RNA sequence: GGGAACGACUCGAGUAGAGUCGAAAAAGAACUAGCGAUUGUAAAAGGCUGUUUGCGCUAAGAUAUGGAAUUAGCGCAAAUAGGUCCGAAUUCCUUGAUAACAUUUCGGACAACCGCGGUAAAACAAGAAUACUUUUCAGUUCGCUGAAAAGUAUUCAAAAGAAACAACAACAACAAC
Reactivity to 2A3 in 0.01 (KOAc 150mM, MgCl2 10mM, bicine 150mM(pH8.5), 24C), signal-to-noise 3, nucleotides 027 to 126: a030g050a030a000c020u070a080g000c000g030a020u000u060g030u070a060a000a040a020g090g020c010u000g010u000u000u010g000c010g010c000u010a020a020g000a100u190a160u300g110g020a070a120u020u000a000g010c000g010c010a000a000a000u000a000g000g020u000c010c000g000a000a020u070u090c030c000u040u090g070a010u020a130a040c040a110u020u040u030c000g000g010a010c010a010a000c030c000g020c030g030g030u100a110a110a000a020c030a100a040
Reactivity to DMS in 0.01 (KOAc 150mM, MgCl2 10mM, bicine 150mM(pH8.5), 24C), signal-to-noise 4, nucleotides 027 to 126: a110g000a110a040c020u010a080g060c010g000a030u000u000g000u000a050a060a220a090g000g000c000u000g010u000u000u000g000c010g010c000u000a010a020g020a170u010a250u010g010g010a120a110u000u000a000g000c000g010c000a000a010a000u000a010g010g000u000c000c000g010a030a020u000u000c090c100u000u010g010a090u000a100a130c160a080u000u000u000c010g000g000a020c000a020a000c010c010g000c000g000g010u000a070a040a080a090c160a070a070